[RMDB]
RNA sequence: GGGAACGACUCGAGUAGAGUCGAAAAUGAGUCACACAAAAGAGAAGUAAGUCCUGCUCCUCUGGAGCUUUCAGGCUGCUUAUGGUACAGUUUGGGAGAUGCAUGUUUAAAAUUCAAAUCCAAAUCAGAACACGAUAGUUUUCGAACUAUCGUGUUCAAAAGAAACAACAACAACAAC
Reactivity to 2A3 in 0.01 (KOAc 150mM, MgCl2 10mM, bicine 150mM(pH8.5), 24C), signal-to-noise 1, nucleotides 027 to 126: u120g000a000g070u060c000a030c020a000c020a070a100a040a010g050a020g010a050a040g040u090a140a020g010u050c020c020u020g000c010u010c000c030u110c070u080g010g030a020g010c000u010u040u040c010a020g050g000c010u000g040c000u150u170a100u210g070g000u090a050c030a000g000u000u050u010g030g020g000a020g000a000u050g000c020a020u010g060u030u220u130a040a150a050a090u190u080c040a090a040a020u000c060c020a000a010a090u140c090a060
Reactivity to DMS in 0.01 (KOAc 150mM, MgCl2 10mM, bicine 150mM(pH8.5), 24C), signal-to-noise 3, nucleotides 027 to 126: u010g000a070g010u000c060a160c080a050c070a090a100a150a070g010a070g020a030a070g030u000a040a110g030u010c110c060u000g000c030u010c010c000u000c070u020g020g010a100g010c050u000u000u000c100a040g010g000c020u000g010c080u000u000a080u010g010g000u000a080c060a040g000u000u000u000g000g010g000a010g020a100u000g010c080a060u010g010u000u010u010a040a060a060a070u000u000c110a030a080a080u020c050c010a070a080a090u000c160a090

The record gives the reactivity of an RNA of 177 nucleotides to 2A3 and DMS. Values cover nucleotides 27 to 126. It was measured as part of the RMDB library OK2TRN. The reactions ran in a buffer of 150 mM KOAc, 10 mM MgCl2 and 150 mM bicine (pH 8.5), at 24 C.